[RMDB]
RNA sequence: GGGAACGACUCGAGUAGAGUCGAAAAAGGACACGGCGUGGGACGCGGCCGGCGGCCCGGCGGUCACGGUGACGACGUAUACCGGCCGGAUCGACGUCGAGGUCGGCGCUCACCUGUACGUCAAGGGGCCCGGGGCCUCGGCCGUGCUGUCCUACGCGGUAAGAGACUGGUUCGCCAGUCUCUUACCAAAAGAAACAACAACAACAAC
Reactivity to 2A3 in 0.01 (KOAc 150mM, MgCl2 10mM, bicine 150mM(pH8.5), 24C), signal-to-noise 1, nucleotides 027 to 156: a010g150g010a060c100a030c240g130g020c010g000u000g000g000g000a010c000g000c020g030g010c020c030g000g000c180g020g010c060c060c000g000g040c170g000g000u060c050a050c140g000g010u090g060a080c120g020a000c020g000u080a000u030a110c010c020g000g000c030c050g040g050a080u110c030g090a110c030g050u220c060g010a040g040g030u000c000g000g000c030g020c010u030c010a030c050c080u050g020u060a030c030g030u020c090a070a090g050g000g010g010c020c010c000g020g030g010g000c000c000u000c000g000g000c050c000g020u010g010c020u030g000u010c020c000u010a000c010g000c000
Conditions: 150 mM KOAc, 10 mM MgCl2 and 150 mM bicine (pH 8.5), 24 C. Structure probing data (2A3) for a 207-nucleotide construct. For 2A3 the reverse transcriptase was SuperScript II with manganese.